[RMDB]
RNA sequence: GGGAACGACUCGAGUAGAGUCGAAAAGAAACAACUGAAGCUUCAACGCCUUUUUUUCCAAUCUUCUUUAGCACCGGGCUAGGGAGUAAGCCCGUGGAACCUUAGUUUUGUUCCCUCGGGACUUACUUGUGGUUCCUGUGGUGCACUCCUGACCCUGACUGUUUGAGAUGUUCGCAUCUCAAACAGUAAAAGAAACAACAACAACAAC
Reactivity to 2A3 in 0.01 (KOAc 150mM, MgCl2 10mM, bicine 150mM(pH8.5), 24C), signal-to-noise 2, nucleotides 027 to 156: g040a010a100a000c040a050a110c090u170g070a110a010g030c000u240u250c140a100a030c100g030c020c030u090u080u050u050u000u030u140c030c060a110a150u030c040u200u010c020u060u160u120a050g010c060a080c120c060g010g030g020c030u070a070g020g070g000a010g010u030a040a010g010c000c000c000g050u010g000g020a010a000c010c000u060u010a010g020u050u110u180u110g120u090u060c020c030c040u060c080g130g010g000a010c000u050u000a000c010u040u020g120u100g110g010u000u070c000c000u030g110u260g030g010u030g060c030a000c030u000c000c020u030g040a080c000c000c000u000g020
The record gives the reactivity of an RNA of 207 nucleotides to 2A3. The reactions ran in a buffer of 150 mM KOAc, 10 mM MgCl2 and 150 mM bicine (pH 8.5), at 24 C. 2A3 adducts were read by reverse transcription with SuperScript II with manganese.